About this RNA:
Chemical mapping of a 177-nucleotide RNA with DMS and 2A3. It was measured as part of the RMDB library M2PK50. For DMS, 2,530 sequencing reads were counted.
[RMDB]
RNA sequence: GGGAACGACUCGAGUAGAGUCGAAAACCUGGGAUCUUCGGAUCCCAGGAAAUAAAUUCAGCGGUAAGCUCCGGUAAAAUAUUACCGCUGAACCGGAGCUUAAAACGGGGUUGUUCGCAACCCCGAACAUAGAGUGUUUGUUCGCAAACACUCUAUGAAAAGAAACAACAACAACAAC
Reactivity to DMS in 0.01 (KOAc 150mM, MgCl2 10mM, bicine 150mM(pH8.5), 24C), signal-to-noise 2, nucleotides 027 to 126: c000c000u000g010g020g010a010u000c000u000u030c130g040g010a020u000c000c000c000a000g010g000a010a050a040u010a070a090a140u000u000c060a040g010c070g000g030u000a040a030g010c020u000c030c000g000g010u000a070a040a070a100u010a050u000u010a120c060c040g010c030u000g010a090a020c020c000g000g000a030g010c020u000u000a020a040a050a170c020g020g010g020g000u000u010g010u000u020c160g020c010a010a020c010c000c000c010g000a010a050
Reactivity to 2A3 in 0.01 (KOAc 150mM, MgCl2 10mM, bicine 150mM(pH8.5), 24C), signal-to-noise 2, nucleotides 027 to 126: c000c020u010g020g010g000a000u000c010u050u060c210g090g000a000u000c010c000c000a000g000g000a010a000a010u060a000a080a020u160u080c030a020g030c030g090g070u060a040a000g000c000u000c010c010g040g020u070a130a170a110a060u160a110u110u160a040c030c020g000c040u010g010a000a000c000c000g020g020a010g000c030u030u070a050a050a020a010c030g020g010g000g010u000u030g020u020u060c180g000c100a000a010c000c000c010c000g000a020a000